[RMDB]
RNA sequence: GGGAACGACUCGAGUAGAGUCGAAAACUGGAUACCUUCGGGUAUCCAGAAAGGCCGUGUAGUGUUGGGUCGCGAAAGGCCAUAAAUAAACAAUCACUCAGAAAAGCCAUAGCUUCGGCUAUGGCAACUUUUGUACAUGAUUCGUCAUGUACAAAAGAAAAGAAACAACAACAACAAC
Reactivity to DMS in 0.01 (KOAc 150mM, MgCl2 10mM, bicine 150mM(pH8.5), 24C), signal-to-noise 5, nucleotides 027 to 126: c000u000g000g000a010u000a000c000c000u010u010c210g030g010g020u000a000u000c000c000a000g000a020a100a100g010g010c010c000g020u010g020u000a100g010u000g020u010u000g000g010g020u000c020g010c030g000a110a160a190g000g000c000c020a070u010a020a030a070u010a040a080a100c090a070a090u000c120a040c030u000c040a090g000a100a100a110a190g000c000c000a010u000a000g010c000u000u010c230g020g010c000u000a000u000g000g000c010a000a010
Reactivity to 2A3 in 0.01 (KOAc 150mM, MgCl2 10mM, bicine 150mM(pH8.5), 24C), signal-to-noise 4, nucleotides 027 to 126: c000u000g010g000a000u000a010c010c000u010u070c130g110g000g000u000a000u020c000c000a000g000a020a020a000g010g020c000c040g050u030g040u070a040g010u010g070u110u090g110g030g010u100c020g000c020g080a100a050a030g010g000c000c000a000u060a010a030a010u020a010a040a010c040a020a080u150c050a010c050u030c030a030g130a070a160a030a020g020c000c000a000u000a010g000c000u030u050c270g100g000c000u000a000u000g000g000c000a000a000
Structure probing data (DMS and 2A3) for a 177-nucleotide construct.
Values cover nucleotides 27 to 126.
It was measured as part of the RMDB library M2PK50.